Structure probing data (2A3) for a 177-nucleotide construct.
[RMDB]
RNA sequence: GGGAACGACUCGAGUAGAGUCGAAAAGAGACCAUCCAAUUGACCGCUGCUUCUGCUCCAAAGUCCCACUCUAUGCAGUUUGGUCAGAUACUUGCUGAGCGCUUGAGGGAACUCCGUACUCUGCGGACCAGAUCGGUUCAUUCGUGAACCGAUCUGGAAAAGAAACAACAACAACAAC
Reactivity to 2A3 in 0.01 (KOAc 150mM, MgCl2 10mM, bicine 150mM(pH8.5), 24C), signal-to-noise 1, nucleotides 027 to 126: g140a000g030a070c010c010a110u140c030c020a090a180u040u120g010a030c000c000g040c030u020g000c040u090u020c030u120g050c000u100c030c010a050a220a000g070u030c000c000c020a040c030u130c010u030a130u300g030c010a030g030u110u250u140g070g030u090c000a030g040a050u130a070c080u130u120g070c010u050g020a000g040c000g050c100u040u050g000a020g000g010g050a060a050c000u000c000c000g030u000a080c070u120c000u070g000c010g000g000a010

2A3 adducts were read by reverse transcription with SuperScript II with manganese. The RNA was probed in 150 mM KOAc, 10 mM MgCl2 and 150 mM bicine (pH 8.5) at 24 C.